[RMDB]
The record gives the reactivity of an RNA of 177 nucleotides to DMS and 2A3. The 2A3 profile rests on 1,419 reads.

RNA sequence: GGGAACGACUCGAGUAGAGUCGAAAAUUGUGUACGCGGAUGGUCUAACACCAGAUGACAUAUCAGCAAGAGUCAGGUUGUGUAACAACGUUAAUGGAUUCUUCGAGAAUGAUCUGACAAAGCAAGACCUCACCUUGCAUUUCGAUGCAAGGUGAGGAAAAGAAACAACAACAACAAC
Reactivity to DMS in 0.01 (KOAc 150mM, MgCl2 10mM, bicine 150mM(pH8.5), 24C), signal-to-noise 2, nucleotides 027 to 126: u000u000g020u010g010u010a040c150g010c060g030g020a070u000g020g000u000c040u010a140a080c070a070c110c130a040g020a110u040g000a090c050a020u000a150u000c040a100g000c300a050a030g000a070g020u000c000a050g010g010u020u010g020u000g040u020a090a060c070a000a040c040g010u010u010a080a150u000g030g010a010u000u000c020u020u000c060g000a110g000a020a030u000g000a040u010c000u000g000a090c080a050a100a080g000c120a100a030g010a150
Reactivity to 2A3 in 0.01 (KOAc 150mM, MgCl2 10mM, bicine 150mM(pH8.5), 24C), signal-to-noise 1, nucleotides 027 to 126: u090u110g050u010g000u010a020c060g010c020g150g020a060u020g030g010u080c060u030a080a020c020a010c060c020a020g020a060u080g020a000c020a000u090a000u070c040a000g000c000a060a000g000a000g050u000c020a010g000g100u010u000g010u050g070u090a140a130c050a030a010c030g080u100u210a050a030u180g060g000a020u060u070c000u030u060c040g040a050g030a080a010u080g000a040u000c000u000g050a010c040a080a040a000g030c010a020a050g040a020

High DMS reactivity at an A or C suggests that its Watson-Crick edge is free. Conditions: 150 mM KOAc, 10 mM MgCl2 and 150 mM bicine (pH 8.5), 24 C.